An RNA of 207 nucleotides, treated with 2A3 and read out base by base. For 2A3, 806 sequencing reads were counted. Conditions: 150 mM KOAc, 10 mM MgCl2 and 150 mM bicine (pH 8.5), 24 C. Values cover nucleotides 27 to 156. Source: RMDB library M2RFPK, as collected in RNAgym.
RNA sequence: GGGAACGACUCGAGUAGAGUCGAAAAUUGCGCUUGCCUAUUUAGGCAUACUUCUCAGGAUGGCGCGUUGCAGUCCAACAAGAUCCAGGGACUGUACAGAAUUUUCCUAUACCUCGAGUAGGGUUUGAAAACGUUAGGCACUUCGGUGCCUAACGAAGUGUGUAGCACUGUUCGCAGUGCUACACACAAAAGAAACAACAACAACAAC
Reactivity to 2A3 in 0.01 (KOAc 150mM, MgCl2 10mM, bicine 150mM(pH8.5), 24C), signal-to-noise 2, nucleotides 027 to 156: u080u080g000c000g020c020u050u230g000c010c000u110a130u150u150u200a020g000g000c000a000u090a080c020u080u030c020u000c040a030g160g020a090u140g030g010c000g000c010g010u000u060g000c000a000g000u000c000c000a000a050c030a240a120g100a240u090c040c060a020g000g000g000a000c000u000g030u020a000c020a020g220a120a000u070u040u020u000c020c000u030a070u020a140c010c010u070c050g000a000g000u040a080g020g030g000u000u040u120g130a100a070a010a000c000g020u000u000a000g000g000c000a000c010u020u020c290g030g010u010g000c000c000u000a000a000c000g000a010a000